RNA sequence: GGGAACGACUCGAGUAGAGUCGAAAAGGACCGUCCCCUCGGUAAUGGCGAAUGGGACCCCAGUCCUUCUUCCCACUGAGAAGAAGGUUACUGGCACUCCCUUAGCCAUCCGAGUGGACGUGCGUCCCCUUUGAAGGGGGUUCGCCCCCUUCAAAGGAAAAGAAACAACAACAACAAC
Reactivity to DMS in 0.01 (KOAc 150mM, MgCl2 10mM, bicine 150mM(pH8.5), 24C), signal-to-noise 2, nucleotides 027 to 126: g000g010a090c070c010g000u000c000c000c040c010u000c010g020g010u010a050a020u010g000g000c000g020a170a130u010g000g000g000a060c190c300c010c000a000g020u010c000c010u010u000c000u000u000c000c030c130a080c270u000g020a060g010a020a010g010a010a010g000g000u010u010a050c050u000g000g030c060a200c270u000c000c010c000u000u000a300g020c000c020a010u000c000c020g010a000g020u000g000g000a010c010g010u000g020c050g000u000c000c010
Reactivity to 2A3 in 0.01 (KOAc 150mM, MgCl2 10mM, bicine 150mM(pH8.5), 24C), signal-to-noise 1, nucleotides 027 to 126: g060g000a040c000c000g000u000c000c000c000c010u040c020g000g030u070a010a100u010g000g000c000g000a060a010u030g000g000g000a010c080c000c010c000a010g010u040c010c000u030u010c010u000u010c020c090c030a210c190u300g090a300g000a120a000g000a000a000g010g000u110u250a030c000u020g010g000c000a020c030u030c000c000c000u020u040a000g030c000c000a010u010c000c000g010a000g010u010g000g010a000c010g000u020g030c030g060u040c000c000

Structure probing data (DMS and 2A3) for a 177-nucleotide construct. High 2A3 reactivity points to a flexible backbone, as in loops and unpaired stretches. The data come from the RNA Mapping Database (RMDB), library VIROID. DMS adducts were read by reverse transcription with MarathonRT. The RNA was probed in 150 mM KOAc, 10 mM MgCl2 and 150 mM bicine (pH 8.5) at 24 C.